[RMDB]
RNA sequence: GGGAACGACUCGAGUAGAGUCGAAAAGCAUCCCGCUUCGGCGGGAUGCAAAAGCGAUCGUGUCAUUGCCUCGAACGCAAGUCAUAUAAUGAUGGGCAGUGAAAAGUCUGGGCUUCGGCCCAGACAACAUUAUAUUAGGCUUCGGCCUAAUAUAAUGAAAAGAAACAACAACAACAAC
Reactivity to 2A3 in 0.01 (KOAc 150mM, MgCl2 10mM, bicine 150mM(pH8.5), 24C), signal-to-noise 5, nucleotides 027 to 126: g000c010a000u010c000c010c000g020c020u030u050c120g140g030c000g030g010g000a000u000g000c000a010a010a000a020g010c030g030a050u070c050g060u050g060u120c010a020u010u050g010c000c010u030c030g050a080a020c030g000c070a050a030g080u070c060a020u190a030u060a300a160u190g110a060u100g030g010g020c010a000g000u010g030a030a040a040a040g010u010c000u000g000g000g000c010u040u080c260g120g010c000c000c000a000g000a000c000a000a000
Reactivity to DMS in 0.01 (KOAc 150mM, MgCl2 10mM, bicine 150mM(pH8.5), 24C), signal-to-noise 5, nucleotides 027 to 126: g010c000a010u000c000c000c010g020c010u000u010c170g030g010c000g020g010g020a000u010g000c000a010a030a070a170g010c040g000a060u000c040g010u010g000u000c010a020u000u000g010c010c000u000c070g010a060a110c050g010c050a110a090g010u000c090a060u010a110u020a080a100u000g000a120u010g010g000g020c000a020g020u010g010a090a090a080a120g000u000c000u000g000g010g010c000u000u000c180g020g010c010c000c000a010g000a000c010a030a070